[RMDB]
RNA sequence: GGGAACGACUCGAGUAGAGUCGAAAAAGAAUCUCCUUCGGGAGAUUCUGAACCACUAAGCUGAUUGCGGAUGACGACGAGGCAGCUCGUGUCGAGCAUCCACCGAGAACAGGUUCGCCUGUUCUAACCAAUCUUCUGAUUUCGAUCAGAAGAUUGGAAAAGAAACAACAACAACAAC
Reactivity to DMS in 0.01 (KOAc 150mM, MgCl2 10mM, bicine 150mM(pH8.5), 24C), signal-to-noise 6, nucleotides 027 to 126: a000g010a020a000u000c000u000c000c010u000u010c220g020g010g010a000g000a000u000u000c000u000g000a080a230c020c010a130c210u010a080a120g000c080u010g000a120u010u010g030c070g010g010a020u000g000a120c020g010a030c010g000a040g000g020c300a110g000c010u000c010g020u000g010u000c020g000a160g000c010a020u000c000c020a090c120c160g000a040g000a020a010c000a000g000g000u000u010c230g000c000c000u000g000u000u000c000u000a030a130
Reactivity to 2A3 in 0.01 (KOAc 150mM, MgCl2 10mM, bicine 150mM(pH8.5), 24C), signal-to-noise 6, nucleotides 027 to 126: a000g000a010a000u010c000u010c000c020u020u080c190g090g000g000a000g000a000u000u000c000u000g000a010a020c010c000a050c100u150a110a050g110c080u080g170a260u160u280g100c080g010g020a010u030g030a020c030g000a000c000g010a020g030g060c080a140g110c030u010c010g090u110g080u100c020g020a060g020c000a010u000c010c010a020c030c070g160a030g000a010a000c000a000g010g060u050u090c160g080c040c010u000g000u010u010c000u010a000a030
Annotation: Chemical mapping of a 177-nucleotide RNA with DMS and 2A3. The RNA was probed in 150 mM KOAc, 10 mM MgCl2 and 150 mM bicine (pH 8.5) at 24 C. DMS adducts were read by reverse transcription with MarathonRT. For DMS, 7,690 sequencing reads were counted.